Chemical mapping of a 207-nucleotide RNA with DMS and 2A3. Conditions: 150 mM KOAc, 10 mM MgCl2 and 150 mM bicine (pH 8.5), 24 C. 2A3 adducts were read by reverse transcription with SuperScript II with manganese. Source: RMDB library OK3TST, as collected in RNAgym.

RNA sequence: GGGAACGACUCGAGUAGAGUCGAAAAACUGUUCUUUGGAAAGAAUCCUUCACAAUUUUUCUUAUGUCUUAUUUCUAGUAAUAGAAACUGACAUUUAGCUUCUUUGGGACAAUGUACAAUUCUCUUCCAUAUCACUUAAGAGAUAAUGGUGAACUAGAAUGUGGUAACCAUUCGUGGUUACCACAUUAAAAGAAACAACAACAACAAC
Reactivity to DMS in 0.01 (KOAc 150mM, MgCl2 10mM, bicine 150mM(pH8.5), 24C), signal-to-noise 1, nucleotides 027 to 156: a090c070u000g030u010u010c030u000u000u010g010g000a080a080a130g010a150a140u000c030c040u000u000c040a100c070a020a040u000u000u010u010u040c000u020u010a030u010g010u000c000u000u010a060u000u010u000c010u000a030g000u010a230a200u010a040g000a030a000a040c090u000g000a040c030a010u000u000u000a050g000c080u000u000c010u000u000u000g010g030g020a100c050a030a090u010g060u000a070c090a060a080u000u000c030u000c040u000u010c010c050a170u010a050u000c060a030c060u000u030a070a060g000a070g010a040u000a040a070u010g040g010u000g030a040a120c030u000a140g010
Reactivity to 2A3 in 0.01 (KOAc 150mM, MgCl2 10mM, bicine 150mM(pH8.5), 24C), signal-to-noise 2, nucleotides 027 to 156: a000c030u020g020u070u000c040u080u060u030g040g000a040a040a040g020a070a070u070c050c050u110u130c090a040c040a280a200u150u110u020u120u090c010u090u080a010u020g010u040c010u000u130a220u060u000u000c000u010a050g020u080a140a140u010a140g010a010a020a000c010u010g010a000c000a010u050u120u060a010g010c010u010u000c010u060u040u040g020g000g010a010c020a070a180u060g010u110a090c040a070a120u060u000c020u000c000u030u010c040c000a010u040a030u060c010a010c040u210u170a090a020g060a010g040a110u120a120a120u110g010g040u020g050a090a040c010u000a020g070